[RMDB]
RNA sequence: GGGAACGACUCGAGUAGAGUCGAAAAGAUAUGGACGUGGUCAGAGCGACGGUCGGAAACGACCGAAUCGCGACGAAGACCGUCCUAAGUCAAAAGAUGUAAGAUCUGUUCGCAGAUCUUACAUCAAGGAAUAAGCACGGUUCGCCGUGCUUAUUCCAAAAGAAACAACAACAACAAC
Reactivity to 2A3 in 0.01 (KOAc 150mM, MgCl2 10mM, bicine 150mM(pH8.5), 24C), signal-to-noise 2, nucleotides 027 to 126: g000a010u030a000u070g020g000a020c070g140u290g150g300u030c010a010g000a010g010c010g050a020c000g000g000u010c000g020g000a040a020a010c010g010a000c000c010g030a000a110u030c010g000c030g030a060c010g010a020a000g010a000c000c000g010u030c000c000u010a010a010g000u000c040a060a010a030a170g010a000u000g000u010a000a020g020a010u000c020u010g050u050u100c300g000c110a000g000a010u000c010u010u000a000c000a000u010c000a010a010
Reactivity to DMS in 0.01 (KOAc 150mM, MgCl2 10mM, bicine 150mM(pH8.5), 24C), signal-to-noise 1, nucleotides 027 to 126: g010a010u000a110u000g000g000a030c010g050u000g010g030u010c000a040g000a150g010c000g000a040c000g010g000u010c000g010g000a050a020a040c000g010a010c000c000g010a030a040u000c010g010c000g000a120c130g000a080a090g000a020c030c010g000u000c000c000u000a000a100g000u000c020a120a140a140a120g010a000u000g020u000a000a000g000a000u000c000u000g020u000u010c210g000c000a000g010a000u000c000u000u000a010c000a000u000c000a060a070